[RMDB]
RNA sequence: GGGAACGACUCGAGUAGAGUCGAAAAGCCGAUACUAUCACUUUAGGAUAGCGUUCUGCAUAUUUAGAGUGUAUGCCUACCCAGAGUAGGAAACCCAGCAAGUAUGCGUCGCUUCCACCUUGAACUUGUAUAUACGCAUAUUCGUAUGCGUAUAUACAAAAGAAACAACAACAACAAC
Reactivity to DMS in 0.01 (KOAc 150mM, MgCl2 10mM, bicine 150mM(pH8.5), 24C), signal-to-noise 4, nucleotides 027 to 126: g030c090c050g020a080u000a100c150u000a140u010c050a090c110u000u010u020a110g030g000a030u010a000g020c010g010u020u000c020u030g030c000a030u000a000u000u000u010a090g010a150g020u010g020u000a040u000g010c000c000u000a000c000c000c210a150g010a150g010u000a000g010g010a010a040a020c010c030c020a130g010c250a070a040g020u000a010u000g010c020g030u010c020g010c020u010u000c000c020a110c120c020u010u020g010a050a100c150u000u010
Reactivity to 2A3 in 0.01 (KOAc 150mM, MgCl2 10mM, bicine 150mM(pH8.5), 24C), signal-to-noise 9, nucleotides 027 to 126: g060c030c040g050a050u090a150c080u110a100u180c070a070c130u100u130u220a070g010g010a050u090a070g010c000g050u100u040c090u210g000c010a010u030a030u020u050u060a120g050a040g080u150g010u030a040u270g040c000c000u000a000c000c010c050a050g030a050g040u000a000g000g000a010a010a010c030c020c010a020g060c050a050a000g000u000a000u000g000c000g010u010c000g000c000u010u000c000c000a030c020c030u030u130g070a080a080c020u020u000
Structure probing data (DMS and 2A3) for a 177-nucleotide construct. The RNA was probed in 150 mM KOAc, 10 mM MgCl2 and 150 mM bicine (pH 8.5) at 24 C. DMS adducts were read by reverse transcription with MarathonRT. Source: RMDB libraries RFM100 and RFMREP, as collected in RNAgym.